Conditions: 150 mM KOAc, 10 mM MgCl2 and 150 mM bicine (pH 8.5), 24 C. The record gives the reactivity of an RNA of 207 nucleotides to 2A3. Reactivities are rounded to 0.1 and cut off at 0 and 3. For 2A3, 915 sequencing reads were counted. The data come from the RNA Mapping Database (RMDB), library OK3TST. For 2A3 the reverse transcriptase was SuperScript II with manganese.

[RMDB]
RNA sequence: GGGAACGACUCGAGUAGAGUCGAAAACUCAUCCACGCCUUUUAAGGAAUCGACCACGACCACGCGCUGGCCCAUGCCGCGCAUGCGCUCAUGCUCACGGACUUGAUGCGGUGUGCACUGCUGGCCUGGGGCUUUGAGUUCCACCCACAGGGUGCGCCUUCUUCUAGCCGUUCGCGGCUAGAAGAAGAAAAGAAACAACAACAACAAC
Reactivity to 2A3 in 0.01 (KOAc 150mM, MgCl2 10mM, bicine 150mM(pH8.5), 24C), signal-to-noise 1, nucleotides 027 to 156: c010u020c030a030u000c050c070a040c080g000c000c020u210u180u090u210a130a040g020g050a060a060u130c070g050a080c040c020a060c120g050a030c060c040a040c080g060c010g000c040u090g070g010c010c070c030a070u180g010c000c010g000c020g000c040a010u030g010c060g000c000u050c040a020u110g050c000u060c040a090c090g130g000a080c000u060u040g060a060u190g060c030g000g050u060g000u050g020c010a020c100u100g000c010u060g010g010c010c000u000g000g000g030g000c000u070u030u110g030a060g010u040u050c000c010a030c000c000c020a080c030a120g010g000g030u010g000c000g030c030